[RMDB]
RNA sequence: GGGAACGACUCGAGUAGAGUCGAAAAAGGCUCAGGGAAGCAAAGUGGCUCAAUAAAAACUUUUGAUAUUAGUUUUUAUGGGUAUUUGCACUCUGGUCAGGAGAGCUGAGUACGGAAGCUCCAUUAAAUCGCACCAAAAUUUCGAUUUUGGUGCGAUAAAAGAAACAACAACAACAAC
Reactivity to DMS in 0.01 (KOAc 150mM, MgCl2 10mM, bicine 150mM(pH8.5), 24C), signal-to-noise 2, nucleotides 027 to 126: a110g000g000c000u080c030a020g000g010g000a110a130g050c000a000a000a010g040u060g010g030c000u000c020a030a040u000a000a000a000a030a000c000u000u000u040u010g030a240u070a130u020u010a000g000u000u000u000u000u000a000u000g000g000g000u000a060u000u000u000g030c000a210c000u020c000u000g000g030u000c030a120g010g010a130g000a000g050c010u000g020a140g030u010a060c200g010g010a150a020g010c010u000c000c030a130u030u010a050a110
Reactivity to 2A3 in 0.01 (KOAc 150mM, MgCl2 10mM, bicine 150mM(pH8.5), 24C), signal-to-noise 3, nucleotides 027 to 126: a000g120g010c140u140c080a020g000g040g070a180a070g010c000a040a000a020g130u150g220g010c000u000c010a100a100u020a000a000a000a000a000c010u020u030u060u260g080a030u060a110u270u200a030g010u000u000u000u000u000a000u010g000g000g000u040a090u010u000u000g000c020a040c010u000c000u010g000g000u030c000a000g030g070a140g000a000g030c000u020g010a000g140u080a090c020g030g000a010a020g010c000u000c000c000a010u030u090a110a170